Source: RMDB libraries RFM100 and RFMREP, as collected in RNAgym. Chemical mapping of a 177-nucleotide RNA with DMS and 2A3. The RNA was probed in 150 mM KOAc, 10 mM MgCl2 and 150 mM bicine (pH 8.5) at 24 C. Reactivities are given for positions 27 through 126. For 2A3 the reverse transcriptase was SuperScript II with manganese.
[RMDB]
RNA sequence: GGGAACGACUCGAGUAGAGUCGAAAAUGCUAUGCCAAAGUGUCUGACAUAAUCAAACAUUUGCGCAUUCUUUGACCAAGAAUAGUCAGCAAAUUGUAUUUUCAAUCAAUGCAGACCAUUUGUUUCACCAUACUAAUGCCUUCGGGCAUUAGUAUGGAAAAGAAACAACAACAACAAC
Reactivity to DMS in 0.01 (KOAc 150mM, MgCl2 10mM, bicine 150mM(pH8.5), 24C), signal-to-noise 3, nucleotides 027 to 126: u030g000c120u000a030u020g000c070c060a090a040a050g000u010g030u000c030u000g000a040c100a130u020a120a160u010c050a050a070a020c000a060u000u000u000g010c190g000c020a000u000u000c020u000u000u010g020a190c160c070a090a070g000a030a070u020a070g000u010c040a100g030c030a020a050a030u030u010g000u010a030u040u020u050u020c080a020a030u010c040a110a040u000g010c010a060g000a010c020c080a050u000u010u000g010u000u010u000c010a150
Reactivity to 2A3 in 0.01 (KOAc 150mM, MgCl2 10mM, bicine 150mM(pH8.5), 24C), signal-to-noise 7, nucleotides 027 to 126: u130g020c060u080a060u140g050c030c030a100a060a040g120u130g010u070c000u010g040a190c030a050u160a090a070u200c080a030a090a050c000a000u000u000u010g020c030g000c010a000u020u000c000u010u020u120g060a040c000c040a000a000g020a010a010u150a090g090u240c070a030g000c000a030a040a010u070u090g020u030a150u090u120u060u100c040a040a050u060c020a020a000u050g010c000a010g000a020c010c000a040u060u050u050g020u000u000u010c040a050